Conditions: 150 mM KOAc, 10 mM MgCl2 and 150 mM bicine (pH 8.5), 24 C. An RNA of 207 nucleotides, treated with 2A3 and DMS and read out base by base. For 2A3 the reverse transcriptase was SuperScript II with manganese. The DMS profile rests on 2,273 reads. Source: RMDB library OK3TST, as collected in RNAgym.
RNA sequence: GGGAACGACUCGAGUAGAGUCGAAAAAACAUCAUAUAAAUGUGUAUGUCUAAUAUGAUUUUAUGUUAAGUAUAUAUACACACAGAGACACACAACUAUUUUAUAGUAUUGGAGGUCAUAUAGCCUUGAUUAGAGCAUGGGCUCAAGUCAGACUGCACAUAGCCAGUAAUUUCGAUUACUGGCUAUGAAAAGAAACAACAACAACAAC
Reactivity to 2A3 in 0.01 (KOAc 150mM, MgCl2 10mM, bicine 150mM(pH8.5), 24C), signal-to-noise 2, nucleotides 027 to 156: a000a000c050a050u130c050a000u070a000u010a110a060a090u080g000u000g000u010a010u050g000u000c030u030a030a060u020a170u050g030a120u090u120u060u260a090u100g060u020u110a050a060g020u000a010u030a030u030a000u010a170c010a040c010a000c100a030g100a010g080a090c020a000c080a030c010a130a020c020u050a060u050u210u080u140a150u110a050g020u060a070u020u040g080g000a160g000g000u030c000a000u120a000u040a220g000c000c020u050u100g060a070u030u150a040g010a020g000c080a050u130g010g130g000c030u040c060a060a000g050u000c020a090g010a060c030u020g080c090a000
Reactivity to DMS in 0.01 (KOAc 150mM, MgCl2 10mM, bicine 150mM(pH8.5), 24C), signal-to-noise 1, nucleotides 027 to 156: a040a030c040a100u010c030a080u010a080u010a080a060a100u010g010u010g000u010a020u030g000u000c040u000a110a080u010a060u000g000a200u010u010u010u000a030u040g000u010u000a090a170g010u000a090u000a060u000a040u000a050c010a060c010a080c020a160g000a180g000a030c010a020c060a030c050a040a070c030u000a040u000u020u000u000a070u000a090g000u000a080u000u010g000g000a130g010g000u000c030a120u000a050u000a050g060c000c020u000u000g030a090u000u000a280g000a110g010c020a140u010g030g030g010c030u020c000a030a130g010u000c010a030g000a020c020u000g000c130a120